Conditions: 150 mM KOAc, 10 mM MgCl2 and 150 mM bicine (pH 8.5), 24 C.
The record gives the reactivity of an RNA of 177 nucleotides to DMS and 2A3.
Values cover nucleotides 27 to 126.
2A3 adducts were read by reverse transcription with SuperScript II with manganese.
For DMS the reverse transcriptase was MarathonRT.
It was measured as part of the RMDB library OK2TRN.
RNA sequence: GGGAACGACUCGAGUAGAGUCGAAAACUUAGGCCGGCCUGGUUGCUCUGCUGUCCCUGGCAAGCGGGUGGCACAAUCCUGAAGCAUGCGGAUGUCAGCUAAGGCGGAGUACGCGGUGCGGGCGAUGAUGCUUGCUCGUUUUCGAACGAGCAAGCAUAAAAGAAACAACAACAACAAC
Reactivity to DMS in 0.01 (KOAc 150mM, MgCl2 10mM, bicine 150mM(pH8.5), 24C), signal-to-noise 1, nucleotides 027 to 126: c050u000u010a030g000g010c030c010g000g000c000c000u000g030g010u000u020g040c030u000c050u030g040c040u010g000u000c240c300c020u000g000g010c030a040a000g030c010g010g010g040u000g020g000c110a100c170a090a100u000c090c050u010g010a070a130g010c030a050u000g000c020g000g000a120u000g000u000c050a020g020c040u020a220a260g000g060c010g000g030a050g050u000a030c060g020c100g000g050u000g020c000g010g010g010c010g020a060u000g000
Reactivity to 2A3 in 0.01 (KOAc 150mM, MgCl2 10mM, bicine 150mM(pH8.5), 24C), signal-to-noise 1, nucleotides 027 to 126: c000u000u030a080g020g230c000c000g100g030c000c010u030g000g040u100u020g000c000u010c020u030g020c050u040g040u140c030c010c060u140g000g000c000a130a000g040c000g080g040g000u080g160g130c100a010c010a100a160u110c000c040u080g120a060a100g020c000a010u140g160c020g080g150a060u100g010u000c000a000g010c010u030a150a040g000g040c000g000g000a000g000u030a000c050g050c000g120g170u300g300c090g000g040g000c000g040a030u140g110